[RMDB]
This 177-nucleotide RNA was probed chemically with 2A3 and DMS. Source: RMDB library TTRINS, as collected in RNAgym. DMS adducts were read by reverse transcription with MarathonRT. The 2A3 profile rests on 2,092 reads. 2A3 adducts were read by reverse transcription with SuperScript II with manganese.
RNA sequence: GGGAACGACUCGAGUAGAGUCGAAAAGAUAUGGAAUCCAUUAGAUCUGAUGACCUAUGUCACAGAAAUUGGGUCGGAAACGACCCAAUUUUCACAGCAUAGCAAGGAUAUUCUGGAUUCCUAAGUCCGCAUGAACUAAGUUCGCUUAGUUCAUGCGAAAAGAAACAACAACAACAAC
Reactivity to 2A3 in 0.01 (KOAc 150mM, MgCl2 10mM, bicine 150mM(pH8.5), 24C), signal-to-noise 1, nucleotides 027 to 126: g030a060u130a060u230g000g000a000a010u000c000c000a000u000u100a100g040a090u000c020u080g150a300u160g020a290c040c000u000a000u040g190u240c060a020c070a140g020a060a000a000u000u010g030g020g000u000c050g080g010a100a070a000c000g010a010c000c020c010a000a010u010u010u010u000c000a010c000a040g070c030a010u010a000g000c020a180a300g000g000a010u040a090u000u080c000u040g000g000a000u000u020c000c000u010a050a020g070u010c020
Reactivity to DMS in 0.01 (KOAc 150mM, MgCl2 10mM, bicine 150mM(pH8.5), 24C), signal-to-noise 2, nucleotides 027 to 126: g010a130u010a280u010g000g000a010a000u010c000c020a030u000u000a000g020a030u000c010u000g000a170u020g020a170c300c010u000a000u000g000u000c100a260c260a300g000a000a010a000u000u000g000g000g000u000c000g040g030a060a050a180c020g010a000c000c000c000a000a000u000u010u010u000c070a140c300a290g000c010a010u000a030g000c050a060a140g000g010a000u000a060u020u000c050u000g010g010a020u000u000c000c000u000a070a070g010u000c010